[RMDB]
RNA sequence: GGGAACGACUCGAGUAGAGUCGAAAAAGAGGGGUGGAGAAAUCGCCGCUCGCCAGCAGUCAAGGCGUCGUUUCUCGCUCACGUGGGUCGGCAUUGCACAGCAAGCAGCGGCAUCAUACGCGCACACGAUUUAAUCGGAGUUCGCUCCGAUUAAAUCAAAAGAAACAACAACAACAAC
Reactivity to DMS in 0.01 (KOAc 150mM, MgCl2 10mM, bicine 150mM(pH8.5), 24C), signal-to-noise 5, nucleotides 027 to 126: a080g050a060g010g010g020g030u000g010g010a070g000a050a070a070u060c080g000c020c030g000c020u010c080g000c040c050a160g020c080a070g010u010c070a090a100g000g010c040g000u000c040g020u020u020u000c010u000c030g000c020u000c060a060c120g000u010g000g000g010u020c030g010g010c040a060u000u000g000c040a040c090a100g000c050a060a110g000c030a040g000c040g000g000c070a040u010c080a100u020a090c070g000c040g020c070a080c120a100c180
Reactivity to 2A3 in 0.01 (KOAc 150mM, MgCl2 10mM, bicine 150mM(pH8.5), 24C), signal-to-noise 9, nucleotides 027 to 126: a010g110a060g030g060g020g010u120g050g040a040g050a040a050a020u140c050g010c010c010g030c010u010c040g030c020c010a060g010c030a010g050u110c070a100a070g060g030c020g010u060c020g000u030u070u040c040u000c010g010c010u060c010a060c030g030u070g000g010g010u050c020g030g000c040a060u010u080g010c080a040c040a100g040c020a070a040g000c020a010g020c000g020g000c000a030u040c020a020u060a050c040g010c000g000c010a020c000a010c130